Chemical mapping of a 177-nucleotide RNA with 2A3 and DMS. For 2A3, 3,194 sequencing reads were counted. Source: RMDB library RFMREP, as collected in RNAgym.
RNA sequence: GGGAACGACUCGAGUAGAGUCGAAAAACCGAAGCGAAAGCUGUCGUCCAGUACGUUUCCGGUGAUCAAGGACGUAAGCCGGAGGAGCAAAGGUGAUUAGAGACCCCUGUAGUUCCGGCCGUAAACUCAAGUGAUUUAUGUUCGCAUAAAUCACUUGAAAAGAAACAACAACAACAAC
Reactivity to 2A3 in 0.01 (KOAc 150mM, MgCl2 10mM, bicine 150mM(pH8.5), 24C), signal-to-noise 3, nucleotides 027 to 126: a000c020c000g010a030a000g040c000g030a100a070a030g010c030u040g090u100c020g050u050c030c010a020g020u060a040c010g000u000u060u020c090c060g040g070u090g010a080u150c070a090a100g070g020a010c020g020u060a080a000g020c000c000g000g000a010g000g070a080g000c020a050a060a020g030g010u080g030a110u070u190a080g030a020g060a170c000c020c020c000u040g050u110a020g050u050u010c000c000g020g010c010c010g070u110a070a060a070c010u000
Reactivity to DMS in 0.01 (KOAc 150mM, MgCl2 10mM, bicine 150mM(pH8.5), 24C), signal-to-noise 3, nucleotides 027 to 126: a100c080c010g010a100a040g020c020g000a110a110a130g020c010u000g010u000c060g030u000c060c030a150g030u000a080c070g010u010u000u000c030c060g030g000u000g000a080u010c160a100a080g010g010a040c040g030u010a080a150g010c000c000g000g000a070g000g010a190g020c020a020a080a040g010g000u010g000a170u000u010a110g000a170g000a130c080c020c030c060u000g010u000a150g010u000u000c010c010g010g000c010c060g010u000a070a040a080c200u000